[RMDB]
RNA sequence: GGGAACGACUCGAGUAGAGUCGAAAAGGUUCCCCCCCUCAACGUCCGGGGGGGGCGCGAUGCCGUCAUCUUACUCAUGUGUGUUGUACACCCGACUCUGGUAUUUGACAUCACCAAACUACUCCUGGACCGGAGAAUCCUUCGGGAUUCUCCGGUCAAAAGAAACAACAACAACAAC
Reactivity to 2A3 in 0.01 (KOAc 150mM, MgCl2 10mM, bicine 150mM(pH8.5), 24C), signal-to-noise 1, nucleotides 027 to 126: g170g000u060u070c000c000c010c060c000c000c020u020c040a030a180c030g210u060c050c020g000g000g000g000g000g020g010g020c010g030c020g120a120u140g040c000c050g030u020c000a030u000c020u030u070a120c020u030c120a090u030g080u030g040u010g010u240u000g060u060a030c000a010c040c000c030g000a050c000u030c010u070g010g010u020a130u020u260u090g060a090c030a090u070c020a010c030c030a120a050a020c020u060a000c000u000c010c010u030g040